RNA sequence: GGGAACGACUCGAGUAGAGUCGAAAAGGGCCCCCCGAUCCGAGGGGCCCGACGCCCGGAUCUGGAGAGCACUCCCGGCCGUAUGGUCGAGUGUCCCCCCGGAGGGAGAGAACCACGCGGAGAAGGCAAGGCAAGCGCUUCGGCGCUUGCAAAAGAAACAACAACAACAAC
Reactivity to DMS in 0.01 (KOAc 150mM, MgCl2 10mM, bicine 150mM(pH8.5), 24C), signal-to-noise 2, nucleotides 027 to 129: g000g000g080c000c000c000c000c000c000g000a030u040c150c060g040a090g060g000g030g080c000c000c090g030a010c220g060c120c000c010g000g000a050u020c030u000g000g000a060g040a090g030c070a050c030u040c050c160c090g000g060c000c000g070u040a120u000g000g000u010c040g050a000g010u020g000u050c040c040c030c030c010c010g030g090a090g000g000g000a040g000a040g020a080a070c000c000a090c090g060c050g110g000a060g040a080a050g000g040c080a150a040g080
Reactivity to 2A3 in 0.01 (KOAc 150mM, MgCl2 10mM, bicine 150mM(pH8.5), 24C), signal-to-noise 2, nucleotides 027 to 129: g000g000g050c000c000c000c000c000c010g010a240u010c060c000g040a020g000g020g020g000c050c020c000g010a030c000g040c000c000c000g000g050a060u060c030u050g020g000a040g000a000g000c000a040c060u040c050c170c010g000g000c000c040g170u300a290u300g010g000u010c000g000a040g040u040g020u030c000c000c010c000c000c020g020g000a040g000g040g000a050g000a010g000a010a030c020c010a010c000g060c040g030g000a020g000a080a020g020g000c070a040a020g000